[RMDB]
RNA sequence: GGGAACGACUCGAGUAGAGUCGAAAAGAGCACGUGCAGGUCCGAGUGGCACGCACCGCAGGAGGUGACGUCGAUGGCCACCUCACCCUCGGCGGGGUGCUCGACUUCGAUCUCCUCGAUCCGCAACGGCUCGUUCGCUGCGGUGUGUACGGCGGCAACGCCACGGUAUAUUCGUAUACCGUGGCGUAAAAGAAACAACAACAACAAC
Reactivity to DMS in 0.01 (KOAc 150mM, MgCl2 10mM, bicine 150mM(pH8.5), 24C), signal-to-noise 2, nucleotides 027 to 156: g020a090g000c030a020c020g020u000g020c050a130g020g010u010c010c030g040a140g030u030g010g000c070a070c050g000c010a060c010c020g060c050a090g000g000a090g020g050u000g000a010c070g030u000c060g020a140u010g010g030c160c020a060c010c010u000c010a040c000c000c040u000c120g010g020c030g000g000g010g000u000g010c050u000c050g020a040c040u000u000c040g010a020u000c010u000c010c040u000c020g000a090u010c030c020g030c020a050a030c040g030g000c060u010c100g020u010u000c010g020c000u010g030c000g020g000u010g040u000g030u010a050c140g010g000c020g000g000c040a190
Reactivity to 2A3 in 0.01 (KOAc 150mM, MgCl2 10mM, bicine 150mM(pH8.5), 24C), signal-to-noise 2, nucleotides 027 to 156: g040a000g010c010a010c100g060u140g000c060a040g030g060u040c030c030g020a100g040u240g060g040c080a020c080g010c020a060c020c000g050c030a020g000g060a020g030g000u010g010a040c030g020u060c030g060a120u200g100g030c080c000a000c000c000u020c020a060c000c020c030u130c090g020g000c020g000g040g010g000u010g000c020u000c000g020a030c000u040u030c020g090a040u020c000u030c000c020u000c010g020a070u020c020c020g010c050a070a040c040g050g010c060u040c100g010u050u070c090g000c050u050g010c000g000g050u050g020u030g000u110a050c050g040g030c020g020g040c040a040